[RMDB]
RNA sequence: GGGAACGACUCGAGUAGAGUCGAAAAGAAGAGAAUACCGGUGUAAGUGCAGCCCGUCUUACACCGUAAGGCACAGCGGAAACGCUGAUGUCAAAUACAGGGCUGGGAGACGGAAGUAGACCGUCAAAAUACUGGCACCAUUCGUGGUGCCAGUAUUAAAAGAAACAACAACAACAAC
Reactivity to 2A3 in 0.01 (KOAc 150mM, MgCl2 10mM, bicine 150mM(pH8.5), 24C), signal-to-noise 2, nucleotides 027 to 126: g110a000a010g020a000g050a060a100u110a070c000c080g000g000u000g000u010a000a000g000u030g080c020a010g000c030c010c000g010u000c000u000u000a020c000a000c010c000g010u040a040a080g000g000c000a000c000a010g000c030g040g000a060a030a000c020g010c010u000g000a060u000g000u000c020a000a090a000u190a000c070a050g060g000g000c000u000g040g100g010a080g000a000c000g050g000a070a100g100u220a050g080a050c000c000g000u020c010a030a030
Reactivity to DMS in 0.01 (KOAc 150mM, MgCl2 10mM, bicine 150mM(pH8.5), 24C), signal-to-noise 2, nucleotides 027 to 126: g000a120a100g030a120g000a130a160u020a100c270c000g000g060u000g000u010a000a010g000u020g020c030a060g030c000c000c000g000u000c000u010u010a000c000a000c060c020g000u040a000a080g000g000c000a000c000a010g000c000g000g010a150a040a120c000g050c000u000g010a050u020g050u000c020a060a060a080u060a150c300a100g030g020g000c010u000g000g000g020a110g000a020c000g010g000a090a090g000u020a070g040a130c020c000g030u010c020a060a100

The record gives the reactivity of an RNA of 177 nucleotides to 2A3 and DMS. 2A3 adducts were read by reverse transcription with SuperScript II with manganese. The data come from the RNA Mapping Database (RMDB), library OK1LIB. For DMS the reverse transcriptase was MarathonRT. For DMS, 2,296 sequencing reads were counted. Conditions: 150 mM KOAc, 10 mM MgCl2 and 150 mM bicine (pH 8.5), 24 C.